[RMDB]
RNA sequence: GGGAACGACUCGAGUAGAGUCGAAAAGAUAUGGACUAACUUCGAUAAGAACUGUUCGGAAACGAACAAGUUCUUUUGACGAAGGUGUCCUAAGUCAAACGUCACAACGCUUCGGCGUUGUGACGAAGGAAAUGAUAUAGUUCGCUAUAUCAUUUCCAAAAGAAACAACAACAACAAC
Reactivity to DMS in 0.01 (KOAc 150mM, MgCl2 10mM, bicine 150mM(pH8.5), 24C), signal-to-noise 6, nucleotides 027 to 126: g000a030u000a230u000g000g010a010c000u000a120a120c000u000u000c000g010a160u010a030a010g010a010a010c000u000g000u000u000c010g010g000a070a040a110c000g010a010a010c000a020a050g010u000u000c000u000u000u000u010g010a220c070g000a010a010g000g010u000g000u000c000c000u000a030a090g010u000c010a100a090a260c020g000u000c000a010c000a010a000c000g020c000u010u020c200g030g010c000g010u000u000g000u000g000a000c000g010a020a050
Reactivity to 2A3 in 0.01 (KOAc 150mM, MgCl2 10mM, bicine 150mM(pH8.5), 24C), signal-to-noise 4, nucleotides 027 to 126: g020a010u030a030u080g000g000a010c020u050a300a210c000u280u000c010g080a120u090a300a030g000a000a000c010u010g000u000u000c000g010g010a040a030a020c020g000a010a010c040a050a040g000u010u000c000u010u010u020u060g050a010c000g010a000a000g040g030u020g010u000c000c000u000a060a000g010u000c040a170a040a040c020g000u000c010a000c010a000a020c000g010c020u060u140c300g190g000c010g000u000u010g000u000g000a000c000g000a010a020